[RMDB]
Background:
Structure probing data (DMS) for a 177-nucleotide construct. Source: RMDB library M2PK50, as collected in RNAgym. DMS adducts were read by reverse transcription with MarathonRT. The reactions ran in a buffer of 150 mM KOAc, 10 mM MgCl2 and 150 mM bicine (pH 8.5), at 24 C.
RNA sequence: GGGAACGACUCGAGUAGAGUCGAAAAAGAAUCUCCUUCGGGAGAUUCUGAACGACUAAGCUGAUUGCGGAUGACGACGAGGCAGCUCGUGUCGAGCAACCACCGAGAACAGGUUCGCCUGUUCUAAGAUUCCCGAGCAGUUCGCUGCUCGGGAAUCAAAAGAAACAACAACAACAAC
Reactivity to DMS in 0.01 (KOAc 150mM, MgCl2 10mM, bicine 150mM(pH8.5), 24C), signal-to-noise 1, nucleotides 027 to 126: a000g000a030a020u000c000u010c000c000u000u000c210g040g000g020a000g000a010u000u000c020u020g020a150a110c000g020a020c010u020a130a210g030c020u000g000a140u000u020g000c180g000g030a210u000g000a190c030g020a100c070g000a240g000g040c050a210g010c000u000c010g050u010g040u000c020g000a080g000c030a090a080c000c030a170c270c180g000a030g010a020a010c000a010g000g000u000u010c260g000c010c000u010g020u000u000c000u000a030a070